[RMDB]
RNA sequence: GGGAACGACUCGAGUAGAGUCGAAAAGGUGGCUCUGAGAGACGUACUCCUCAGCGUGAGACAGAGUCACCGAUUUAGCAUGUUCGUCCUACGAAGCACGUGCUAUCGUUGUAGGACGUUCAUGCGAGGGAUCCAUUACCUUCGGGUAGUGGAUCCCAAAAGAAACAACAACAACAAC
Reactivity to DMS in 0.01 (KOAc 150mM, MgCl2 10mM, bicine 150mM(pH8.5), 24C), signal-to-noise 6, nucleotides 027 to 126: g000g030u000g000g000c000u010c000u000g000a100g020a190g010a050c020g000u000a090c090u010c030c020u000c070a280g000c010g000u000g000a160g010a160c010a020g000a020g020u000c000a000c000c010g000a020u030u020u020a100g020c000a000u000g000u010u000c000g010u000c000c000u000a000c000g000a070a060g000c060a200c300g000u040g000c050u010a060u010c070g020u000u040g000u000a000g000g000a000c000g000u000u000c000a000u000g010c010g000a080
Reactivity to 2A3 in 0.01 (KOAc 150mM, MgCl2 10mM, bicine 150mM(pH8.5), 24C), signal-to-noise 9, nucleotides 027 to 126: g000g000u000g000g000c000u000c000u000g080a100g010a020g030a150c010g010u060a110c070u100c050c020u090c080a040g020c010g010u040g040a200g020a050c000a000g000a000g000u000c000a000c000c000g000a000u000u000u060a020g000c000a000u000g010u000u000c000g000u000c000c000u010a010c030g040a050a010g050c050a050c290g190u300g040c060u110a230u300c050g080u080u190g040u020a000g000g000a000c000g000u000u000c000a000u000g000c000g000a100

An RNA of 177 nucleotides, treated with DMS and 2A3 and read out base by base. Source: RMDB library OK1LIB, as collected in RNAgym. 2A3 is a SHAPE reagent: it acylates the 2'-hydroxyl of flexible nucleotides of all four kinds. In probing experiments dimethyl sulfate is read out at A N1 and C N3, which are open when not base-paired. The reactions ran in a buffer of 150 mM KOAc, 10 mM MgCl2 and 150 mM bicine (pH 8.5), at 24 C. 2A3 adducts were read by reverse transcription with SuperScript II with manganese.